Source: RMDB library OK1LIB, as collected in RNAgym. Chemical mapping of a 177-nucleotide RNA with 2A3 and DMS. As a SHAPE reagent, 2A3 marks flexible, mostly unpaired nucleotides at the ribose 2'-OH. Conditions: 150 mM KOAc, 10 mM MgCl2 and 150 mM bicine (pH 8.5), 24 C. The DMS profile rests on 1,175 reads. DMS adducts were read by reverse transcription with MarathonRT.
RNA sequence: GGGAACGACUCGAGUAGAGUCGAAAACACGGUACACCACCGUACCACGCCCGAUCCAGGGACGUUAGGAGCAACACCGCCAUGAGCGAAGUCGUCACCGCCGCACCGGCACCGCCCGUAGUCCGACAGAGUUUACAUGCUUCGGCAUGUAAACUCUAAAAGAAACAACAACAACAAC
Reactivity to 2A3 in 0.01 (KOAc 150mM, MgCl2 10mM, bicine 150mM(pH8.5), 24C), signal-to-noise 2, nucleotides 027 to 126: c050a000c080g000g050u200a010c030a040c050c030a060c030c060g020u040a070c000c000a040c040g070c000c010c000g020a050u060c010c020a070g020g040g000a020c010g050u110u080a080g020g020a050g020c000a000a030c010a040c070c000g000c030c020a120u160g030a040g060c050g030a040a000g070u050c010g010u030c020a000c030c010g010c010c010g000c000a000c020c000g050g010c020a000c020c010g010c000c000c000g050u050a020g050u050c010c000g000a040c110
Reactivity to DMS in 0.01 (KOAc 150mM, MgCl2 10mM, bicine 150mM(pH8.5), 24C), signal-to-noise 1, nucleotides 027 to 126: c260a220c050g000g010u000a000c000a000c300c050a010c020c060g070u030a070c000c000a180c090g000c020c000c050g000a080u000c120c110a150g000g000g040a060c180g000u000u000a150g040g000a280g030c170a050a050c170a030c010c000g050c000c000a120u030g000a210g000c020g030a070a010g000u000c070g000u000c120a190c010c020g000c010c080g000c020a050c050c070g010g020c020a000c050c100g000c020c040c030g000u000a080g000u050c000c000g020a110c130